[RMDB]
RNA sequence: GGGAACGACUCGAGUAGAGUCGAAAAGAUAUGGACCUCACGCUCGCCCACAGAGGUCGGAAACGACUACCCACCUGUGGGAACUACGAGGUGAGGUCCUAAGUCAAAACCUUCGUUCGCGAAGGAACAUUGGUCACUAGUUCGCUAGUGACCAAUGAAAAGAAACAACAACAACAAC
Reactivity to 2A3 in 0.01 (KOAc 150mM, MgCl2 10mM, bicine 150mM(pH8.5), 24C), signal-to-noise 2, nucleotides 027 to 126: g030a030u070a090u130g000g000a000c000c000u000c000a000c010g300c020u000c000g020c030c000c000a010c000a000g050a010g000g010u000c010g000g000a080a090a010c010g030a010c030u100a130c060c040c030a040c030c000u010g000u010g000g010g110a020a020c140u270a030c050g000a000g000g000u000g000a000g020g000u000c010c000u000a010a000g000u000c010a010a020a040a090c010c000u000u010c020g020u030u040c300g010c000g120a010a000g000g000a010a030
Reactivity to DMS in 0.01 (KOAc 150mM, MgCl2 10mM, bicine 150mM(pH8.5), 24C), signal-to-noise 5, nucleotides 027 to 126: g000a090u000a300u000g000g000a010c010c000u000c000a020c000g020c010u000c020g000c000c000c000a030c000a020g010a070g050g000u000c000g010g010a100a080a230c000g020a010c000u000a050c070c030c130a300c090c020u010g000u000g000g010g010a100a030c070u010a250c030g010a010g010g010u000g000a020g000g000u000c000c000u000a000a050g010u000c040a100a040a130a110c000c000u010u000c000g020u000u030c140g010c020g020a030a010g010g000a070a160